[RMDB]
RNA sequence: GGGAACGACUCGAGUAGAGUCGAAAAGAGACCUCCAGGCCAAUGACACCGGACGCUACUUCUGCCUGGCUGCCAAUGACCAAAACAAUGUUACCAUCAUGGCUAACCUGAAGGUUAAAGGUCAGGCUACUGUAUUUCUUUUCGAAGAAAUACAGUAAAAAGAAACAACAACAACAAC
Reactivity to 2A3 in 0.01 (KOAc 150mM, MgCl2 10mM, bicine 150mM(pH8.5), 24C), signal-to-noise 6, nucleotides 027 to 126: g040a000g030a030c010c000u000c020c020a040g020g030c020c020a090a140u100g010a020c020a020c060c020g040g030a020c030g020c040u080a080c030u100u030c010u020g000c000c000u000g010g010c010u030g000c010c010a080a150u070g020a030c020c000a040a070a040a110c070a090a150u190g010u060u030a030c020c020a040u190c050a070u210g030g000c050u020a010a020c000c020u080g120a170a050g030g000u010u020a060a080a010g020g000u010c000a000g010g000c000
Reactivity to DMS in 0.01 (KOAc 150mM, MgCl2 10mM, bicine 150mM(pH8.5), 24C), signal-to-noise 9, nucleotides 027 to 126: g010a120g010a090c040c020u000c030c040a070g010g010c030c050a070a090u010g000a080c060a050c040c030g010g010a080c100g010c060u000a070c090u000u000c070u000g020c010c010u000g010g000c040u000g010c060c050a080a150u010g010a030c040c020a050a100a080a140c140a100a070u000g010u000u000a060c080c080a150u010c130a070u010g010g010c300u000a020a040c010c090u000g010a080a130g010g000u000u000a030a090a150g000g010u000c000a020g000g010c040